[RMDB]
RNA sequence: GGGAACGACUCGAGUAGAGUCGAAAACUUGCUUCGGCAAGAUGGUAGGGGUCUCCGUUGAAACCGGAGAGCAUCGAUCUAUACUGAAGCCUCCACGGUAUAGGGAGCUCUCACGGUGGAGGAGACGGAGGCACCCAAUUCCGGGUUUCGACCCGAAUACUCAGGACAUGUUCGCAUGUCCUGAGUAAAAAGAAACAACAACAACAAC
Reactivity to 2A3 in 0.01 (KOAc 150mM, MgCl2 10mM, bicine 150mM(pH8.5), 24C), signal-to-noise 1, nucleotides 027 to 156: c010u000u000g000c010u030u060c190g200g000c020a020a000g040a070u090g080g160u180a090g000g070g020g030u020c010u020c010c010g060u120u020g020a030a010a010c000c000g010g010a010g000a020g040c000a010u300c010g000a000u000c000u000a000u000a000c020u010g070a180a050g040c030c000u000c000c000a020c030g030g000u000a000u010a010g020g000g000a000g020c010u000c000u010c030a250c040g000g010u000g010g000a030g010g000a000g010a000c020g000g000a000g000g000c010a040c000c000c010a000a000u160u020c090c040g040g000g030u010u110u130c220g090a020c020c000c000g000a020a030
Structure probing data (2A3) for a 207-nucleotide construct. For 2A3, 1,389 sequencing reads were counted. Values cover nucleotides 27 to 156.